[RMDB]
RNA sequence: GGGAACGACUCGAGUAGAGUCGAAAAAUCACACAGCGCGCCGUCUCCAUUGUCAUACGCCACCCUGGCAUCCCAGAAGAGCUGCUGGUGGAGGAGCUGGCGGUGCUGUCGCCGCACAGCGCGCGGCGCCAGAUGCGAAAUUCGUUUCGCAUCUGGCAAAAGAAACAACAACAACAAC
Reactivity to 2A3 in 0.01 (KOAc 150mM, MgCl2 10mM, bicine 150mM(pH8.5), 24C), signal-to-noise 2, nucleotides 027 to 126: a000u140c040a050c000a010c000a040g010c000g000c000g000c010c010g050u050c000u000c000c020a080u110u240g130u200c050a070u090a300c090g000c010c000a010c000c010c000u000g010g000c020a080u070c030c000c010a130g110a300a000g030a090g050c080u070g030c020u020g010g000u000g010g040a120g000g010a010g000c020u040g020g010c030g020g000u060g000c030u040g020u030c020g000c010c000g020c000a060c020a230g100c040g040c020g010c060g090g050c010
Reactivity to DMS in 0.01 (KOAc 150mM, MgCl2 10mM, bicine 150mM(pH8.5), 24C), signal-to-noise 3, nucleotides 027 to 126: a110u020c080a100c160a060c030a070g000c010g000c010g020c020c010g000u020c000u000c010c010a180u010u010g010u000c160a120u000a140c240g020c030c010a040c050c020c260u000g020g010c060a090u000c020c010c030a170g010a120a130g000a090g010c050u000g030c100u010g020g020u000g000g000a080g000g000a040g000c030u000g000g010c000g010g030u000g030c040u010g010u000c100g020c010c000g000c030a080c080a110g010c100g050c040g010c010g010g010c030
About this RNA:
Chemical mapping of a 177-nucleotide RNA with 2A3 and DMS. For 2A3, 2,707 sequencing reads were counted. It was measured as part of the RMDB library OK2TRN. The reactions ran in a buffer of 150 mM KOAc, 10 mM MgCl2 and 150 mM bicine (pH 8.5), at 24 C.